[RMDB]
RNA sequence: GGGAACGACUCGAGUAGAGUCGAAAACCUCGCAUCGCAAGUUCGUGCUUGCGACUUACACGUACGGCGAGGGGUGGGCGAAAGUUGCCAUGAGACCGUAACUUUCGUAGUCAUUGAUAAAGGGGCACAUGCCCUGACUAGUUCGCUAGUCAGGGAACCCUUUGCUAUACUUCGGUAUAGCAAAGGGAAAAGAAACAACAACAACAAC
Reactivity to DMS in 0.01 (KOAc 150mM, MgCl2 10mM, bicine 150mM(pH8.5), 24C), signal-to-noise 3, nucleotides 027 to 156: c010c010u000c040g070c100a270u010c000g000c000a020a010g010u000u010c270g000u000g010c030u010u010g010c010g020a020c100u010u000a150c120a130c120g010u010a070c050g010g010c000g030a050g000g010g010g020u000g020g000g080c010g000a030a020a060g020u000u010g010c010c040a260u010g010a240g020a190c130c130g020u000a030a040c020u000u000u000c010g000u010a120g010u010c040a120u000u010g010a150u000a030a080a110g010g020g010g020c110a080c060a090u010g000c000c010c000u000g010a000c010u000a000g000u000u000c300g040c030u000a000g010u000c000a020g010g000g020a050a060
Reactivity to 2A3 in 0.01 (KOAc 150mM, MgCl2 10mM, bicine 150mM(pH8.5), 24C), signal-to-noise 6, nucleotides 027 to 156: c000c000u010c020g030c030a040u020c010g000c020a030a020g010u180u210c140g200u300g090c020u000u000g000c000g010a010c000u030u120a030c070a020c070g110u150a020c060g060g010c010g010a030g000g010g000g030u090g020g050g010c000g000a000a000a000g000u000u000g010c020c030a090u150g100a060g010a160c060c030g000u010a010a000c000u010u010u010c020g010u000a030g040u040c070a080u050u160g060a020u120a100a050a030g030g000g020g010c060a050c020a100u180g040c010c000c000u000g000a000c000u000a000g010u040u010c160g010c110u000a000g010u000c000a000g000g000g010a000a000
This 207-nucleotide RNA was probed chemically with DMS and 2A3. 2A3 adducts were read by reverse transcription with SuperScript II with manganese. It was measured as part of the RMDB library M2RFPK. In probing experiments dimethyl sulfate is read out at A N1 and C N3, which are open when not base-paired.